[RMDB]
RNA sequence: GGGAACGACUCGAGUAGAGUCGAAAAGUGAGAGUGUGAGUGUCUGUGUGUGUCUCAGUCUGUGACACUCACUGUGUGUCACUGUCAGUGAGUGAGACACUCAGACUGACUCACAGUGAGUGACAGAAUUUAGGCGGGUAUUCGUACCCGCCUAAAUAAAAGAAACAACAACAACAAC
Reactivity to DMS in 0.01 (KOAc 150mM, MgCl2 10mM, bicine 150mM(pH8.5), 24C), signal-to-noise 5, nucleotides 027 to 126: g010u010g000a090g000a090g020u010g020u000g000a050g010u000g000u000c030u000g020u000g020u010g020u000g010u000c030u010c020a070g010u000c030u000g010u010g010a130c010a020c000u000c080a050c090u000g000u000g020u000g000u000c000a030c180u010g010u010c090a130g010u010g010a020g010u000g010a100g000a080c060a010c000u000c000a040g000a030c010u010g000a040c000u000c000a020c000a020g000u000g010a050g010u000g010a080c060a060g000a080
Reactivity to 2A3 in 0.01 (KOAc 150mM, MgCl2 10mM, bicine 150mM(pH8.5), 24C), signal-to-noise 4, nucleotides 027 to 126: g150u120g010a100g010a000g080u070g010u030g050a030g010u040g020u000c010u010g090u020g030u020g020u020g050u080c010u010c040a050g080u030c010u030g040u040g060a020c010a000c010u010c010a040c010u000g030u000g000u000g000u030c010a020c080u060g060u080c030a120g160u020g140a030g020u040g020a080g020a070c050a010c070u000c000a010g000a000c000u010g030a010c000u000c010a000c000a010g010u010g010a030g000u020g010a010c000a010g060a050
Structure probing data (DMS and 2A3) for a 177-nucleotide construct. The RNA was probed in 150 mM KOAc, 10 mM MgCl2 and 150 mM bicine (pH 8.5) at 24 C. The 2A3 profile rests on 6,806 reads. For DMS the reverse transcriptase was MarathonRT. For DMS, 10,691 sequencing reads were counted.